The data come from the RNA Mapping Database (RMDB), libraries RFM100 and RFMREP. Chemical mapping of a 177-nucleotide RNA with DMS and 2A3. Reactivities are given for positions 27 through 126.
[RMDB]
RNA sequence: GGGAACGACUCGAGUAGAGUCGAAAAUCAAAUUGGUGUUAGGGGAGCUGGGGCCUUUCAAAAGAGAGCUUUGUAGAGGCAUUCUUUUUGACUACUUUUCUCUAGCGUGCCAUUUUAGUUUUUGACGACUAGAUUACCAUUUCGAUGGUAAUCUAGUAAAAGAAACAACAACAACAAC
Reactivity to DMS in 0.01 (KOAc 150mM, MgCl2 10mM, bicine 150mM(pH8.5), 24C), signal-to-noise 5, nucleotides 027 to 126: u020c070a050a070a100u020u000g010g010u010g010u010u000a030g020g000g000g000a050g000c100u010g010g010g000g020c100c040u000u020u010c060a020a020a020a030g010a080g000a080g020c010u000u000u010g020u030a110g020a040g000g000c010a040u010u000c010u000u010u010u000u010g000a060c120u000a050c050u010u020u010u010c000u000c010u000a040g000c020g020u010g010c010c000a040u020u000u010u010a080g000u010u000u010u010u000g000a280c300g000
Reactivity to 2A3 in 0.01 (KOAc 150mM, MgCl2 10mM, bicine 150mM(pH8.5), 24C), signal-to-noise 9, nucleotides 027 to 126: u090c030a030a030a050u070u060g010g010u070g020u060u030a040g020g010g010g010a030g030c070u080g020g010g040g040c000c000u050u090u040c040a040a040a060a010g090a020g010a020g040c000u090u060u090g170u200a050g020a030g100g000c010a040u100u090c030u060u100u030u050u060g040a030c010u090a120c010u180u070u080u050c000u000c000u000a010g020c020g060u080g030c000c010a060u060u060u030u100a060g010u010u010u010u020u070g060a050c080g000